[RMDB]
RNA sequence: GGGAACGACUCGAGUAGAGUCGAAAAGCACGUAGGUUCAGAUGAUGGGCCCGCAUCUGUACGAAAGUACGACGAAAGUCUAGCCUACGUGCAUGAGCACGCGGGCCCCGUGCUCUACUGCAAAAGAGGCAUAUCAUAGGUUCGCCUAUGAUAUGCCAAAAGAAACAACAACAACAAC
Reactivity to 2A3 in 0.01 (KOAc 150mM, MgCl2 10mM, bicine 150mM(pH8.5), 24C), signal-to-noise 3, nucleotides 027 to 126: g000c000a000c010g010u000a000g010g010u010u000c030a000g000a010u030g010a020u070g010g000g000c000c020c000g000c000a000u000c010u010g010u000a000c000g040a060a020a040g000u000a000c020g000a000c000g070a150a020a000g000u000c010u020a000g010c000c010u010a000c000g000u000g000c000a000u010g000a000g000c010a010c010g000c020g000g000g020c000c000c010c010g000u000g000c000u000c000u020a080c040u050g210c070a070a040a060a010g140a090
Reactivity to DMS in 0.01 (KOAc 150mM, MgCl2 10mM, bicine 150mM(pH8.5), 24C), signal-to-noise 1, nucleotides 027 to 126: g020c020a000c010g000u000a010g000g000u000u010c080a000g010a010u000g020a050u040g000g010g030c000c010c020g010c000a010u000c000u010g000u000a000c000g030a120a100a190g000u000a040c010g000a020c000g000a170a100a170g020u000c000u000a010g000c040c000u040a000c000g000u000g000c000a000u000g000a000g020c000a020c000g000c130g050g000g000c020c000c000c030g020u000g020c000u000c000u010a050c060u000g020c100a150a030a130a070g010a190

Structure probing data (2A3 and DMS) for a 177-nucleotide construct. Reactivities are given for positions 27 through 126. For DMS the reverse transcriptase was MarathonRT. Conditions: 150 mM KOAc, 10 mM MgCl2 and 150 mM bicine (pH 8.5), 24 C. The data come from the RNA Mapping Database (RMDB), library OK1LIB.